The data come from the RNA Mapping Database (RMDB), library OK2TST.
Chemical mapping of a 177-nucleotide RNA with DMS and 2A3.
The reactions ran in a buffer of 150 mM KOAc, 10 mM MgCl2 and 150 mM bicine (pH 8.5), at 24 C.
DMS adducts were read by reverse transcription with MarathonRT.
[RMDB]
RNA sequence: GGGAACGACUCGAGUAGAGUCGAAAAGGACAAGGCGUUCGACUAUCUCGCGAAGCUCGAGCGCAGCGUGAAGUUCCACACGAAGGGCACGGGCUACCUGAACGUGCUGCUGUCGCGCAACGAGAUAUGAUUAGUGGCAUUUCGAUGCCACUAAUCAAAAAGAAACAACAACAACAAC
Reactivity to DMS in 0.01 (KOAc 150mM, MgCl2 10mM, bicine 150mM(pH8.5), 24C), signal-to-noise 3, nucleotides 027 to 126: g020g010a080c090a120a190g020g020c020g000u000u000c010g010a100c140u010a100u010c030u010c110g000c110g010a140a110g010c090u000c030g000a070g000c030g000c020a030g010c070g010u020g010a100a120g020u000u000c010c010a220c040a030c080g000a110a070g020g000g030c020a020c030g000g000g000c040u010a090c230c110u000g010a020a080c020g010u000g020c000u000g020c050u000g000u000c040g010c050g000c100a110a090c040g000a060g010a050u000a150
Reactivity to 2A3 in 0.01 (KOAc 150mM, MgCl2 10mM, bicine 150mM(pH8.5), 24C), signal-to-noise 2, nucleotides 027 to 126: g070g040a040c060a100a050g140g000c020g020u000u020c010g020a010c010u080a120u160c060u030c040g050c090g050a040a010g000c020u030c040g000a020g010c040g000c020a000g020c010g000u040g030a070a010g040u060u000c020c000a020c020a010c030g100a050a020g060g040g000c020a010c070g010g000g050c030u070a150c030c040u100g010a050a010c020g010u010g000c000u010g060c020u080g030u100c050g000c000g020c050a030a100c040g040a020g010a100u140a040